Conditions: 150 mM KOAc, 10 mM MgCl2 and 150 mM bicine (pH 8.5), 24 C. This 207-nucleotide RNA was probed chemically with DMS and 2A3. 2A3 adducts were read by reverse transcription with SuperScript II with manganese. Source: RMDB library RNAMAK, as collected in RNAgym.
RNA sequence: GGGAACGACUCGAGUAGAGUCGAAAACGCUGGGUGAUACAGAGAGGUACAGGGAGCUGAAGCGCGCACGGCGAAGAACUGUAUCAUCUCUCUGUCACCUGUGCUGAAGCGCGCACGGCAACCGAAAGGUGCGACCGACAUUGGUUCGCCAAUGUAAGAUCGCACCUCAAUUCGUUGAGGUGCGAUCAAAAGAAACAACAACAACAAC
Reactivity to DMS in 0.01 (KOAc 150mM, MgCl2 10mM, bicine 150mM(pH8.5), 24C), signal-to-noise 1, nucleotides 027 to 156: c080g010c040u000g000g040g030u020g030a040u000a040c110a080g000a030g020a060g100g040u010a000c030a080g000g010g010a080g050c010u000g000a100a110g010c000g030c080g000c030a300c080g010g010c020g060a100a140g020a110a240c010u000g010u000a040u000c110a110u000c010u040c050u000c050u000g000u020c000a010c000c000u020g020u010g000c000u000g000a150a060g010c010g000c010g100c000a200c050g020g020c030a020a120c000c040g000a070a150a160g000g010u010g020c000g000a090c030c000g020a070c040a050u010u020g030g010u000u000c300g010c000c000a030a010u010g000u000a120a180
Reactivity to 2A3 in 0.01 (KOAc 150mM, MgCl2 10mM, bicine 150mM(pH8.5), 24C), signal-to-noise 4, nucleotides 027 to 156: c040g000c000u050g000g000g000u020g000a040u090a240c020a020g000a000g010a020g010g000u020a000c010a020g010g010g020a010g010c020u040g030a300a060g030c010g020c010g010c000a040c020g000g000c020g070a180a000g010a020a000c000u000g020u010a000u040c030a240u090c080u000c000u000c000u050g010u000c010a000c000c010u000g010u020g000c020u050g010a160a070g000c010g000c000g000c010a010c000g010g000c020a030a010c020c010g060a120a040a020g020g000u040g040c020g040a050c000c040g000a050c010a000u010u040g000g030u080u090c230g050c110c010a010a000u010g010u050a070a080